[RMDB]
RNA sequence: GGGAACGACUCGAGUAGAGUCGAAAAAUUCAGGAGAGUAGAUGAUUCGCGAUAAGUGUGUGUGAAUGGGAUGUCGUCACACAACGAAGCGAGAGCGCGGUGAAUCAUUGCAUCCGCUCCAAACGAAAGAAAGCAAUAUCUUCGGAUAUUGCUUUCUAAAAGAAACAACAACAACAAC
Reactivity to DMS in 0.01 (KOAc 150mM, MgCl2 10mM, bicine 150mM(pH8.5), 24C), signal-to-noise 4, nucleotides 027 to 126: a180u010u010c080a130g000g010a020g020a020g010u000a300g000a020u000g000a020u000u000c000g010c000g010a150u010a050a110g020u000g020u010g010u000g010u000g010a030a060u000g020g010g000a010u000g000u000c220g010u000c000a000c000a010c000a010a020c010g010a140a130g010c010g010a180g020a160g010c030g020c170g000g020u000g000a020a010u000c030a010u000u000g010c030a020u000c010c010g000c010u000c000c010a070a030a070c210g000a080a100
Reactivity to 2A3 in 0.01 (KOAc 150mM, MgCl2 10mM, bicine 150mM(pH8.5), 24C), signal-to-noise 2, nucleotides 027 to 126: a000u090u070c050a030g010g000a010g010a000g000u030a010g000a020u020g020a000u010u000c020g000c040g070a060u070a240a100g020u060g010u010g000u010g000u010g120a020a010u020g020g010g020a000u020g030u070c070g020u010c000a000c000a000c010a020a050c040g060a100a030g020c000g050a060g000a020g080c030g000c040g040g010u010g030a000a010u020c000a010u000u010g000c000a000u010c010c010g010c010u000c010c010a050a040a030c080g070a140a050
Structure probing data (DMS and 2A3) for a 177-nucleotide construct. For 2A3 the reverse transcriptase was SuperScript II with manganese. Source: RMDB library M2PK90, as collected in RNAgym. Reactivities are given for positions 27 through 126. The reactions ran in a buffer of 150 mM KOAc, 10 mM MgCl2 and 150 mM bicine (pH 8.5), at 24 C. The 2A3 profile rests on 3,415 reads. For DMS the reverse transcriptase was MarathonRT.